This 207-nucleotide RNA was probed chemically with DMS and 2A3. Source: RMDB library OK3TST, as collected in RNAgym. DMS adducts were read by reverse transcription with MarathonRT. 2A3 adducts were read by reverse transcription with SuperScript II with manganese. As a SHAPE reagent, 2A3 marks flexible, mostly unpaired nucleotides at the ribose 2'-OH. High DMS reactivity at an A or C suggests that its Watson-Crick edge is free. The reactions ran in a buffer of 150 mM KOAc, 10 mM MgCl2 and 150 mM bicine (pH 8.5), at 24 C.
[RMDB]
RNA sequence: GGGAACGACUCGAGUAGAGUCGAAAAGCGGUCCUUGUCACUCAGUGCGUGUAGCGUCAAUACGUCCAAUUACUAGGCUCCUUAUCUGCUCGCGGGUCAGGUCCUUGGGGUCGAACCCGUCCGGCGUGUGUAUUACUUGGCCUUCGAUAAGCAGGGACACAUGAGAAGGGUUCGCCCUUCUCAUGUGAAAAGAAACAACAACAACAAC
Reactivity to DMS in 0.01 (KOAc 150mM, MgCl2 10mM, bicine 150mM(pH8.5), 24C), signal-to-noise 1, nucleotides 027 to 156: g000c020g050g010u010c010c010u010u030g020u000c040a070c070u010c060a130g030u000g030c080g040u020g080u020a110g030c040g030u000c070a120a110u020a080c070g030u000c020c030a050a150u010u000a090c120u020a060g000g030c030u000c030c000u000u000a040u010c040u000g010c020u010c060g000c030g020g000g000u010c090a080g030g010u000c030c020u010u000g020g030g010g030u000c040g000a060a170c010c020c030g020u010c020c040g000g000c040g060u000g060u020g050u000a120u000u020a030c020u000u000g020g030c000c020u000u000c040g000a100u000a020a080g000c030a040g020g030g010a300
Reactivity to 2A3 in 0.01 (KOAc 150mM, MgCl2 10mM, bicine 150mM(pH8.5), 24C), signal-to-noise 3, nucleotides 027 to 156: g120c130g030g020u070c020c010u040u080g090u030c020a050c040u070c060a050g050u030g070c070g050u060g060u090a030g040c020g070u100c060a070a060u070a090c040g030u000c030c030a060a080u130u020a100c090u070a030g000g060c020u040c020c020u130u060a120u100c030u050g010c020u020c030g030c010g020g000g000u010c020a020g020g010u030c050c000u040u140g100g020g000g000u050c020g000a030a040c000c000c040g010u020c030c000g050g030c040g020u000g010u020g030u030a140u130u120a110c040u030u030g060g000c000c030u040u050c030g050a090u060a220a000g010c030a010g040g000g010a030